[RMDB]
RNA sequence: GGGAACGACUCGAGUAGAGUCGAAAAGACCAAAUUGCUGAUUUAAAACGCGGUGCAGAAAUCGUAGUUUGUACUCCUGGACGUAUGAUUGAUGUUUUAAGUGCGAAUGCAGGACGUGUUACUAACAUCAUCCACCCGAGUUCGCUCGGGUGGAUGAAAAAGAAACAACAACAACAAC
Reactivity to DMS in 0.01 (KOAc 150mM, MgCl2 10mM, bicine 150mM(pH8.5), 24C), signal-to-noise 1, nucleotides 027 to 126: g010a240c090c000a070a070a120u010u030g010c000u000g020a100u000u000u000a090a100a070a160c070g000c000g020g000u000g000c040a060g020a100a030a020u000c030g000u000a020g020u000u000u000g020u000a080c040u000c000c000u010g010g000a080c130g020u000a040u000g000a090u000u010g010a010u010g000u000u000u000u000a030a090g050u010g030c040g020a040a080u010g020c040a070g020g000a120c130g010u000g020u000u010a040c140u020a000a120c230a060

The data come from the RNA Mapping Database (RMDB), library OK2TRN. Chemical mapping of a 177-nucleotide RNA with DMS. For DMS the reverse transcriptase was MarathonRT. The RNA was probed in 150 mM KOAc, 10 mM MgCl2 and 150 mM bicine (pH 8.5) at 24 C.